[RMDB]
RNA sequence: GGGAACGACUCGAGUAGAGUCGAAAAGAAGCAGUCCUUAUUGUGUGUGAUGUUUAGUCAUCGCACUGUACCUACGGGCUGCCAACGUAGGGCCAAUGUGCCGAGAGGCACUAGAAGUACGGCUUAUUAUGAAGCAUCGCCGUACCAAAGAUGCUGAAUACUGCAGCUAUUUCGAUAGCUGCAGUAUAAAAGAAACAACAACAACAAC
Reactivity to 2A3 in 0.01 (KOAc 150mM, MgCl2 10mM, bicine 150mM(pH8.5), 24C), signal-to-noise 3, nucleotides 027 to 156: g090a080a010g000c000a000g000u010c010c020u090u110a110u190u240g070u010g000u000g000u020g050a020u000g070u010u210u120a270g070u190c010a000u010c000g010c000a010c000u040g100u120a170c010c030u020a060c020g000g010g020c010u000g000c000c010a020a010c040g100u120a060g000g000g050c040c040a120a140u170g030u080g000c000c020g010a030g000a010g000g000c000a010c020u000a020g010a100a010g010u050a010c000g000g020c020u020u010a050u090u060a150u140g220a150a030g070c030a010u110c070g010c020c020g030u050a020c000c010a040a030a000g080a070u070g010c030u050g030a020
Reactivity to DMS in 0.01 (KOAc 150mM, MgCl2 10mM, bicine 150mM(pH8.5), 24C), signal-to-noise 3, nucleotides 027 to 156: g020a130a050g000c020a060g030u000c030c020u000u000a080u000u000g000u000g040u000g070u000g000a030u010g020u000u000u000a230g020u010c000a020u010c000g000c000a010c020u000g010u000a080c110c080u000a030c140g040g010g030c010u010g010c060c020a050a060c060g000u000a050g010g020g000c080c060a100a120u010g030u000g020c000c000g010a210g000a300g020g020c000a010c030u000a120g010a120a120g010u000a010c000g010g010c040u000u010a080u020u010a170u010g030a210a170g000c100a060u000c160g030c050c010g000u010a050c030c020a090a080a080g010a160u000g000c020u010g010a250